[RMDB]
RNA sequence: GGGAACGACUCGAGUAGAGUCGAAAAGACAUUGUUGCAGAAAAUGAGAGGGGACGUUGCUACUAUACCAGACAUUGUUUUAGACACUUUGGUGUGUCCUGAUAACCUAUAUUGUGACGAAUCAUUACAUGAUCCCACCAUUCGUGGUGGGAUCAUGAAAAGAAACAACAACAACAAC
Reactivity to DMS in 0.01 (KOAc 150mM, MgCl2 10mM, bicine 150mM(pH8.5), 24C), signal-to-noise 2, nucleotides 027 to 126: g030a060c040a080u000u000g000u010u000g020c070a060g010a090a050a050a080u000g000a070g020a090g000g010g000g010a100c070g030u000u000g000c010u010a080c110u000a080u000a080c070c020a110g020a100c140a050u000u000g000u010u010u000u000a110g000a070c020a030c060u010u000u020g030g020u000g000u000g010u000c010c080u000g000a080u000a080a110c050c070u030a060u000a120u010u000g010u000g000a070c090g000a080a100u010c050a020u010u010a130